[RMDB]
RNA sequence: GGGAACGACUCGAGUAGAGUCGAAAAGAGAUGUCGCGCAUGUGGCCGCGUUCCUGGCGUCCGAACACGCCGGCUUCAUCACCGGCGCCACCGUCGAUGUCAACGGCGGCGCGCUGAUGCUGUAGAAAUGCCAAAAUAGGUUCGCCUAUUUUGGCAUAAAAGAAACAACAACAACAAC
Reactivity to 2A3 in 0.01 (KOAc 150mM, MgCl2 10mM, bicine 150mM(pH8.5), 24C), signal-to-noise 3, nucleotides 027 to 126: g080a000g020a020u090g030u120c040g010c020g000c110a050u120g060u190g170g000c030c010g030c000g010u050u020c030c000u000g020g000c010g020u080c110c100g070a050a040c010a000c040g000c010c000g010g000c010u040u030c010a040u030c000a000c030c010g090g040c020g000c010c020a060c010c000g040u030c010g020a150u210g180u300c050a100a030c030g000g000c000g010g000c020g000c000g000c000u000g010a010u040g030c020u030g020u090a020g130a070a140
Reactivity to DMS in 0.01 (KOAc 150mM, MgCl2 10mM, bicine 150mM(pH8.5), 24C), signal-to-noise 4, nucleotides 027 to 126: g020a140g010a070u010g020u000c070g000c050g000c050a100u000g000u010g010g020c040c020g000c020g000u000u010c030c030u010g010g020c020g000u000c040c050g010a070a100c170a050c010g030c000c000g010g010c030u020u000c110a030u010c050a050c040c020g030g010c000g010c020c050a080c040c000g020u000c040g000a130u000g010u010c140a100a100c030g000g000c030g000g000c300g010c030g010c060u000g000a030u000g010c070u000g010u000a090g010a080a110
Background:
This 177-nucleotide RNA was probed chemically with 2A3 and DMS. The DMS profile rests on 3,441 reads. For 2A3, 2,873 sequencing reads were counted. For DMS the reverse transcriptase was MarathonRT. Source: RMDB library OK2TST, as collected in RNAgym.